Structure probing data (2A3 and DMS) for a 207-nucleotide construct. For 2A3, 1,349 sequencing reads were counted. The RNA was probed in 150 mM KOAc, 10 mM MgCl2 and 150 mM bicine (pH 8.5) at 24 C. For DMS, 1,731 sequencing reads were counted.
[RMDB]
RNA sequence: GGGAACGACUCGAGUAGAGUCGAAAAGGCAGGACUUACCAAGUCUGGGGGCCGAUGAGGGUUGGCUCAAAGUAGGGUUUUGACUUGAAAACUCAAGCUGUGACCACAAAACGAUGGAGGUAAAUGAAAAAUCCAUCUGCCUUCGGGCAGAUGGAAAGGUAUAAUAAAUCUUCGGAUUUAUUAUACCAAAAGAAACAACAACAACAAC
Reactivity to 2A3 in 0.01 (KOAc 150mM, MgCl2 10mM, bicine 150mM(pH8.5), 24C), signal-to-noise 2, nucleotides 027 to 156: g060g000c030a010g020g010a020c000u030u080a090c070c050a050a040g050u010c020u060g000g000g010g020g020c020c050g030a020u090g020a030g060g030g010u070u060g000g010c020u040c080a070a110a030g060u080a050g020g030g000u040u030u030u040g050a070c000u040u030g050a080a060a040a040c030u030c010a020a000g030c040u050g040u080g060a030c030c000a030c030a070a120a050a000c060g050a040u090g020g050a040g050g020u090a040a060a050u170g090a090a050a030a010a030u000c020c000a000u020c000u000g000c000c000u010u020c030g010g010g000c000a000g010a000u000g000g000a000a000a000
Reactivity to DMS in 0.01 (KOAc 150mM, MgCl2 10mM, bicine 150mM(pH8.5), 24C), signal-to-noise 1, nucleotides 027 to 156: g000g000c030a110g020g040a080c040u000u000a110c070c000a090a190g010u000c030u000g000g010g000g010g080c000c050g000a060u000g010a070g010g010g010u000u020g000g030c090u010c120a010a030a090g010u030a130g000g050g040u000u000u000u000g000a090c080u020u070g000a110a090a090a070c040u000c030a020a080g030c030u010g010u010g000a150c010c010a120c090a100a040a060a040c040g010a120u010g010g010a060g010g000u000a030a070a090u010g000a030a040a090a080a240u010c000c000a000u000c000u000g000c000c020u010u010c300g020g020g050c000a000g000a020u000g010g000a000a000a010